[RMDB]
RNA sequence: GGGAACGACUCGAGUAGAGUCGAAAAUAGCUUUGUUGAUAUUGAGAGCUGCUAGAUUGCUCAGUGACAUCAAAAAAUUGGAUCAGCGAGUUUUCAGCACAAUCUGAUUUAUAACUGCUGGCAGCUGUCUCGUUCUAGGAUUCGUCCUAGAACGAGAAAAAGAAACAACAACAACAAC
Reactivity to 2A3 in 0.01 (KOAc 150mM, MgCl2 10mM, bicine 150mM(pH8.5), 24C), signal-to-noise 1, nucleotides 027 to 126: u100a040g030c040u120u090u140g030u050u050g040a080u050a190u180u110g060a090g090a000g140c020u020g010c010u050a010g000a210u080u270g100c030u070c030a000g000u020g090a030c000a170u210c060a010a040a050a080a080a110u070u040g000g000a010u050c050a030g000c010g030a020g090u110u150u030u240c020a030g000c060a030c030a100a030u030c010u000g020a000u030u060u050a170u020a050a000c030u030g030c000u000g050g000c000a000g020c000u040g000
Reactivity to DMS in 0.01 (KOAc 150mM, MgCl2 10mM, bicine 150mM(pH8.5), 24C), signal-to-noise 2, nucleotides 027 to 126: u010a020g030c100u010u020u010g010u010u020g000a080u000a150u000u010g010a140g010a060g010c020u000g000c030u010a020g000a130u000u000g020c110u010c010a030g000u000g000a120c220a100u020c150a000a030a140a010a070a040u000u000g000g000a040u010c100a160g000c060g020a070g000u000u010u020u000c120a060g020c040a080c210a170a060u010c000u000g000a010u000u000u000a070u020a130a070c080u000g000c010u000g000g010c040a030g020c010u000g010